[RMDB]
RNA sequence: GGGAACGACUCGAGUAGAGUCGAAAAGGUACAUCGCCAGCACGGCGUCGGCGUUAUCAAGAUAUUUCGGCUGAAACAGGGUAUCGGCAGGCAGCGGCCCGUUGAGUUUCAUCCCCUGCGCCCGCAGCUAUAGAUUGGGGUUCGCCCCAAUCUAUAGAAAAGAAACAACAACAACAAC
Reactivity to DMS in 0.01 (KOAc 150mM, MgCl2 10mM, bicine 150mM(pH8.5), 24C), signal-to-noise 8, nucleotides 027 to 126: g020g020u000a060c130a060u010c060g020c020c020a110g010c110a130c100g000g000c050g010u000c050g000g010c020g010u010u000a060u000c070a110a110g010a140u010a090u000u000u000c040g010g010c040u010g000a070a070a090c090a110g000g010g020u000a070u000c050g010g010c040a060g010g020c070a090g020c050g010g000c000c020c040g010u000u000g000a100g010u000u000u010c060a190u000c040c010c020c030u000g010c040g010c060c040c100g010c080a060g000
Reactivity to 2A3 in 0.01 (KOAc 150mM, MgCl2 10mM, bicine 150mM(pH8.5), 24C), signal-to-noise 4, nucleotides 027 to 126: g030g020u070a020c020a100u070c060g000c020c010a040g060c080a020c080g090g000c040g050u050c040g010g020c020g020u020u030a110u130c030a050a050g030a110u070a090u110u070u040c010g030g000c040u050g040a090a040a030c040a080g000g030g050u080a120u170c010g040g000c030a040g040g010c010a020g060c020g070g010c010c010c000g000u030u050g020a040g020u030u080u070c040a060u030c030c000c010c010u010g000c030g030c020c030c030g010c010a020g010

The record gives the reactivity of an RNA of 177 nucleotides to DMS and 2A3.
Conditions: 150 mM KOAc, 10 mM MgCl2 and 150 mM bicine (pH 8.5), 24 C.
The DMS profile rests on 13,320 reads.
DMS (dimethyl sulfate) methylates the pairing face of unpaired adenines and cytosines.
High 2A3 reactivity points to a flexible backbone, as in loops and unpaired stretches.
Values cover nucleotides 27 to 126.
The 2A3 profile rests on 7,489 reads.
For 2A3 the reverse transcriptase was SuperScript II with manganese.
DMS adducts were read by reverse transcription with MarathonRT.